An RNA of 207 nucleotides, treated with 2A3 and read out base by base. The 2A3 profile rests on 928 reads.

[RMDB]
RNA sequence: GGGAACGACUCGAGUAGAGUCGAAAAUGACGUUAAACUGCUGACUCAUACAUACUGACACCGGUUGCUCAACAGGCUGUGUGGGACAAUAGAAUAACAAGGCUGUCAAUUUGAGCUUGACGCCUGCAAAACCUGCAGUACUUCGGUACUGCAGGAAGCGAUAGGUUUACUUCGGUAAACCUAUCGCAAAAGAAACAACAACAACAAC
Reactivity to 2A3 in 0.01 (KOAc 150mM, MgCl2 10mM, bicine 150mM(pH8.5), 24C), signal-to-noise 1, nucleotides 027 to 156: u060g040a020c060g030u060u070a090a040a040c040u090g030c030u070g020a060c000u020c030a020u000a010c000a020u120a030c000u050g070a010c030a040c090c100g060g000u050u060g030c020u050c050a050a070c020a060g030g000c020u000g000u000g000u020g050g000g020a000c010a000a050u060a030g070a050a070u020a030a010c060a060a000g040g000c140u190g020u030c010a000a000u040u050u160g040a020g050c030u000u010g000a000c010g000c000c000u000g000c000a040a050a030a170c010c000u000g000c000a000g000u000a000c000u010u030c050g060g000u000a000c000u000g000c000a000g000g010a000a000